RNA sequence: GGGAACGACUCGAGUAGAGUCGAAAAAUGGCGAAUGCAUGGGGAACUAGAUCUGUGUCGCGAGUUCGAUUCUCGCCAGGGCCUGGUCCUGUAGCUCAGUUGGUAGAGCAAGCUGUUCCCCGGACACAAAAUCCAGCUAGGUUCGCCUAGCUGGAAAGUUUAUGUUAACGUUCGCGUUAACAUAAACAAAAGAAACAACAACAACAAC
Reactivity to 2A3 in 0.01 (KOAc 150mM, MgCl2 10mM, bicine 150mM(pH8.5), 24C), signal-to-noise 4, nucleotides 027 to 156: a010u120g100g010c050g070a120a020u130g050c080a100u120g000g000g040g010a030a030c060u120a200g030a140u280c030u030g070u040g040u190c010g000c010g000a000g000u010u010c000g000a000u010u000c000u000c010g000c010c000a000g010g010g000c050c260u200g070g020u030c000c000u000g000u010a000g000c000u010c030a070g020u200u170g140g150u180a010g000a000g000c010a010a000g000c000u010g000u000u000c000c000c000c000g000g000a010c020a000c020a050a130a000a030u000c000c000a000g000c000u000a000g020g000u020u020c040g020c020c010u000a000g000c000u000g000g000a030a000a000
Reactivity to DMS in 0.01 (KOAc 150mM, MgCl2 10mM, bicine 150mM(pH8.5), 24C), signal-to-noise 4, nucleotides 027 to 156: a050u000g020g020c020g020a110a090u000g020c050a090u000g000g010g020g050a050a050c000u000a060g020a060u000c030u000g010u000g050u010c060g000c010g000a030g000u000u000c030g020a300u000u000c000u000c010g020c020c020a100g030g000g000c060c070u000g040g020u000c010c010u010g000u000a080g030c020u000c030a100g000u010u010g020g030u000a120g000a040g030c010a190a090g000c020u000g000u000u000c030c010c000c000g020g010a130c060a100c050a050a080a140a110u000c000c000a010g020c000u010a010g000g010u010u000c300g010c010c010u000a000g000c000u000g000g000a000a000a020
An RNA of 207 nucleotides, treated with 2A3 and DMS and read out base by base.
It was measured as part of the RMDB library M2RFPK.
Reactivities are given for positions 27 through 156.
The RNA was probed in 150 mM KOAc, 10 mM MgCl2 and 150 mM bicine (pH 8.5) at 24 C.
Reactivities are rounded to 0.1 and cut off at 0 and 3.